[RMDB]
RNA sequence: GGGAACGACUCGAGUAGAGUCGAAAAUGCUCAGUAGGAGUGACACUUCCUUCACCAGACUCAACACUGGGCAGCGACUCCUGCGCUGCACAAACAGACGUCACACGUGCGUUUGCACUCGCCAACACACCCAGGUGACCUUCGGGUCACCUGGGUGAAAAGAAACAACAACAACAAC
Reactivity to 2A3 in 0.01 (KOAc 150mM, MgCl2 10mM, bicine 150mM(pH8.5), 24C), signal-to-noise 2, nucleotides 027 to 126: u170g000c030u010c040a080g000u140a000g110g130a000g030u090g090a070c060a000c130u130u140c020c000u100u060c060a020c000c040a030g080a190c030u070c150a010a120c050a070c120u010g000g070g000c020a000g000c030g090a050c000u070c020c000u010g010c020g040c030u010g010c000a000c040a020a200a030c070a020g030a110c020g060u010c020a080c040a000c220g010u080g100c000g010u000u040u100g020c030a030c040u120c040g000c000c000a030a000c040a020